RNA sequence: GGGAACGACUCGAGUAGAGUCGAAAAGCCAAGUGUCCGGCGACCAGGCUGAAGUGGUGCAUGGUAAUUCCGCGCCCCUGAUGGACUUGCUUCAUCGGCGCACCGGUAUAGGGCUCGGGCCCGCCAAAGUCGUAUAGCGAUUCGUCGCUAUACGACUAAAAGAAACAACAACAACAAC
Reactivity to 2A3 in 0.01 (KOAc 150mM, MgCl2 10mM, bicine 150mM(pH8.5), 24C), signal-to-noise 2, nucleotides 027 to 126: g030c000c030a060a060g050u040g020u070c070c040g060g020c040g060a020c000c050a050g050g030c030u080g040a180a030g050u070g070g000u070g010c010a060u060g030g040u190a180a100u300u050c050c030g020c030g020c020c020c000c010u050g000a030u060g000g050a030c040u090u100g060c070u000u030c000a030u010c000g010g010c020g000c020a010c000c000g000g000u140a130u100a120g080g000g020c040u020c070g020g130g000c000c000c000g070c000c030a100a100
Reactivity to DMS in 0.01 (KOAc 150mM, MgCl2 10mM, bicine 150mM(pH8.5), 24C), signal-to-noise 2, nucleotides 027 to 126: g010c010c000a060a100g000u010g010u020c010c070g040g020c090g040a070c170c020a100g010g010c040u010g020a110a080g020u000g010g030u010g000c030a110u000g020g030u000a100a120u000u000c030c020g010c100g000c040c010c090c090u010g030a070u000g010g000a030c050u010u010g010c150u000u000c010a000u000c020g020g000c090g000c010a040c070c040g000g030u010a070u010a100g010g010g020c040u000c070g000g010g010c030c010c020g000c050c120a080a150

Conditions: 150 mM KOAc, 10 mM MgCl2 and 150 mM bicine (pH 8.5), 24 C. An RNA of 177 nucleotides, treated with 2A3 and DMS and read out base by base. For DMS, 1,839 sequencing reads were counted. Values are in units of 0.01, from 0 to 300, in steps of 10. For 2A3, 1,478 sequencing reads were counted.